[RMDB]
RNA sequence: GGGAACGACUCGAGUAGAGUCGAAAAGAAACGGAGCGGCACCUCUUUUAACCCUUGAAGUCACUGCCCGUUUCGAGAGUUUCUCAACUCGAAUAACUAAAGCCAACGUGAACUUUUGCGGAUCUCCUGACUAAACGGCAUUCGUGCCGUUUAGUCAAAAAGAAACAACAACAACAAC
Reactivity to DMS in 0.01 (KOAc 150mM, MgCl2 10mM, bicine 150mM(pH8.5), 24C), signal-to-noise 2, nucleotides 027 to 126: g000a050a020a080c050g010g000a050g000c000g030g040c300a030c040c040u010c000u020u000u000u020a180a170c090c060c080u020u000g020a070a000g010u000c100a070c010u020g000c060c000c050g000u010u000u000c000g020a080g000a110g000u020u000u000c030u020c150a150a070c030u000c000g000a140a080u020a090a110c090u000a070a120a070g000c020c080a070a060c030g000u000g000a030a030c040u000u010u040u000g010c060g000g010a140u000c040u010c000c120
Reactivity to 2A3 in 0.01 (KOAc 150mM, MgCl2 10mM, bicine 150mM(pH8.5), 24C), signal-to-noise 2, nucleotides 027 to 126: g020a010a060a000c040g000g010a170g000c000g000g030c030a020c000c010u030c000u020u060u020u160a050a060c000c050c000u000u110g040a060a000g000u030c030a010c020u020g000c020c000c000g000u000u000u000c030g000a010g000a010g010u000u030u070c120u010c020a030a040c010u010c000g030a050a050u100a190a050c100u190a070a190a000g020c030c010a070a050c070g060u020g060a060a100c050u030u080u140u130g030c020g010g000a030u000c000u020c030c020